[RMDB]
RNA sequence: GGGAACGACUCGAGUAGAGUCGAAAACCAGCCGAGGCCUCCUCACCACGCGGCCUGGGUCUGAGGGUAACAUGGCCCUGCGGGAGAGAGCCAACACGGGGGGGCCCCGGUCCGGCUAACAGGGCAGACGCGUACUCAGUUUCGACUGAGUACGCGUAAAAGAAACAACAACAACAAC
Reactivity to 2A3 in 0.01 (KOAc 150mM, MgCl2 10mM, bicine 150mM(pH8.5), 24C), signal-to-noise 1, nucleotides 027 to 126: c000c000a000g020c000c000g040a050g020g000c010c000u000c000c000u030c020a100c030c020a110c040g080c030g020g010c000c000u000g030g000g090u020c000u100g000a060g000g060g000u040a180a030c110a290u300g140g000c000c040c030u110g140c030g020g040g000a010g000a020g000a040g090c010c000a050a010c100a090c130g000g000g000g020g000g000g010c020c000c000c000g000g000u000c000c000g010g010c020u020a060a000c000a030g010g010g000c010a010g000